An RNA of 177 nucleotides, treated with 2A3 and DMS and read out base by base.
The 2A3 profile rests on 1,339 reads.
It was measured as part of the RMDB library OK2TRN.
Values cover nucleotides 27 to 126.
As a SHAPE reagent, 2A3 marks flexible, mostly unpaired nucleotides at the ribose 2'-OH.

RNA sequence: GGGAACGACUCGAGUAGAGUCGAAAAAGGACACUGAGGAGUGUGAACACCUGACCCUGGCUGAGUGGUGGGAACUCCUCUUCUUCAUCAAGAAGCUGGAUGGACCUGACCAUCAGGAGGUUCUCCACCUACGCGAACUAUUCGUAGUUCGCGUAGGAAAAGAAACAACAACAACAAC
Reactivity to 2A3 in 0.01 (KOAc 150mM, MgCl2 10mM, bicine 150mM(pH8.5), 24C), signal-to-noise 1, nucleotides 027 to 126: a000g030g000a030c020a010c090u120g110a060g190g020a020g090u110g000u020g120a010a020c050a070c050c000u030g070a070c000c000c020u030g130g080c020u050g050a060g110u070g040g020u020g000g010g000a020a000c000u000c010c040u020c000u000u020c020u020u000c000a120u000c010a010a050g000a020a040g020c160u020g060g000a080u080g050g000a030c010c050u040g300a070c000c000a000u020c000a000g060g050a060g000g050u030u020c010u010c060c000a100
Reactivity to DMS in 0.01 (KOAc 150mM, MgCl2 10mM, bicine 150mM(pH8.5), 24C), signal-to-noise 2, nucleotides 027 to 126: a100g020g000a090c030a030c050u030g010a200g000g020a050g040u000g000u000g010a110a110c210a190c000c010u000g020a120c110c020c020u010g000g030c050u010g000a050g040u000g030g010u000g010g000g010a040a090c020u010c000c010u010c010u010u000c010u000u000c220a110u010c180a070a010g010a020a000g010c210u000g000g000a050u000g010g010a280c060c020u000g000a080c000c010a040u000c010a020g000g000a040g000g000u000u000c000u010c020c090a170